Description
The data come from the RNA Mapping Database (RMDB), library 15KLIB. The record gives the reactivity of an RNA of 170 nucleotides to DMS and 2A3. The RNA was probed in 150 mM KOAc, 10 mM MgCl2 and 150 mM bicine (pH 8.5) at 24 C. For 2A3 the reverse transcriptase was SuperScript II with manganese. 2A3 is a SHAPE reagent: it acylates the 2'-hydroxyl of flexible nucleotides of all four kinds.
[RMDB]
RNA sequence: GGGAACGACUCGAGUAGAGUCGAAAAACUAACUUUCUUGCAUUGACCCACUGCUCGAGGACUCCUUCUCUUCCCGCUCGGGAUUUCUUCGUCUCGGACCGGCUCAUCUUCGGCAAAGGGCGGCGGUAAAUCUUAGUGUUCGCACUAAGAAAAAGAAACAACAACAACAAC
Reactivity to DMS in 0.01 (KOAc 150mM, MgCl2 10mM, bicine 150mM(pH8.5), 24C), signal-to-noise 9, nucleotides 027 to 129: a070c130u020a140a120c180u030u060u050c080u030u040g040c120a150u030u040g040a090c030c030c060a160c060u030g000c030u020c000g040a020g000g010a200c070u020c020c030u050u020c060u020c010u000u000c020c020c000g040c120u010c000g000g020g020a090u010u020u000c010u010u020c070g020u020c030u000c040g010g010a070c080c020g000g000c030u040c050a070u020c040u000u000c020g000g020c050a040a080a100g000g000g000c070g000g000c010g000g000u020a040a050a070
Reactivity to 2A3 in 0.01 (KOAc 150mM, MgCl2 10mM, bicine 150mM(pH8.5), 24C), signal-to-noise 9, nucleotides 027 to 129: a000c110u160a060a060c040u100u190u100c050u100u200g040c060a120u030u150g030a060c010c000c020a060c030u010g000c000u000c020g010a020g020g050a110c010u010c010c000u060u040c030u010c000u040u060c010c000c000g030c040u060c040g020g000g010a030u060u050u030c030u040u060c040g100u010c010u010c000g040g020a060c010c010g020g000c000u000c020a090u000c020u070u060c020g030g000c030a030a030a040g030g000g010c010g020g000c000g020g020u090a060a070a060